[RMDB]
RNA sequence: GGGAACGACUCGAGUAGAGUCGAAAAAGGGUGACUAUGUACAAGGUAAAAAUAGCUUUACUAGUGGGUUGUUGGCUGAAGAUUUUUCAGAAAUAGAAAAUCACUAUGUAGGACCAACACCACCUGAUCCCCUGAGAACAUUCGUGUUCUCAGGGGAAAAAGAAACAACAACAACAAC
Reactivity to DMS in 0.01 (KOAc 150mM, MgCl2 10mM, bicine 150mM(pH8.5), 24C), signal-to-noise 2, nucleotides 027 to 126: a000g020g000g010u040g000a120c020u000a090u030g080u000a070c300a030a050g000g000u000a000a010a020a080a090u000a220g000c060u000u030u000a120c050u000a030g010u000g000g000g030u000u000g000u000u000g000g000c030u010g000a050a160g000a060u000u010u000u010u040c060a060g120a030a100a150u060a140g010a020a020a000a020u030c000a090c120u090a010u090g040u020a070g000g000a070c060c010a000a010c010a020c060c040a020c000c020u010g020a110
Reactivity to 2A3 in 0.01 (KOAc 150mM, MgCl2 10mM, bicine 150mM(pH8.5), 24C), signal-to-noise 2, nucleotides 027 to 126: a000g050g050g020u110g000a010c060u110a120u260g000u070a010c020a140a000g050g030u260a080a050a050a210a250u130a110g070c060u000u000u000a010c050u070a020g060u070g150g090g030u180u190g070u000u020g070g000c040u000g000a060a110g000a070u000u000u100u000u000c110a070g000a130a130a130u190a000g010a000a010a000a000u030c000a010c090u110a220u250g090u020a020g000g070a100c040c000a010a000c000a000c000c000a040c000c050u090g030a110

This 177-nucleotide RNA was probed chemically with DMS and 2A3. Values cover nucleotides 27 to 126. Conditions: 150 mM KOAc, 10 mM MgCl2 and 150 mM bicine (pH 8.5), 24 C. For DMS the reverse transcriptase was MarathonRT. The DMS profile rests on 1,596 reads.